This 207-nucleotide RNA was probed chemically with 2A3. Source: RMDB library RNAMAK, as collected in RNAgym. The reactions ran in a buffer of 150 mM KOAc, 10 mM MgCl2 and 150 mM bicine (pH 8.5), at 24 C.

RNA sequence: GGGAACGACUCGAGUAGAGUCGAAAAAACCGAUUCGUCGGUUAGAUACGGGGUCCGUGGUAGAACGUUUGACGGACAUGCUCUGAAGCCUCCACGGAGCAACAGCCCGAGUUUGUUCACGGACGGAGGCACCCCCACCGGUAGGUUCGCCUACCAACCAGAACUCACAUUUCGAUGUGAGUUCUGGAAAAGAAACAACAACAACAAC
Reactivity to 2A3 in 0.01 (KOAc 150mM, MgCl2 10mM, bicine 150mM(pH8.5), 24C), signal-to-noise 2, nucleotides 027 to 156: a000a000c020c010g000a010u070u110c250g050u000c000g100g010u010u050a070g020a120u180a130c100g020g030g080g000u000c010c000g000u000g020g020u130a120g030a070a020c030g040u040u200u300g140a070c020g000g000a010c020a060u050g000c000u000c000u020g020a030a010g000c000c010u000c010c020a010c020g000g020a000g070c020a000a060c030a050g090c020c010c020g070a080g050u000u060u080g190u050u140c020a020c020g030g000a000c000g000g010a000g010g040c000a050c010c000c000c000c000a010c000c030g000g000u000a000g040g010u010u050c180g070c050c010u000a020c030c000a000a030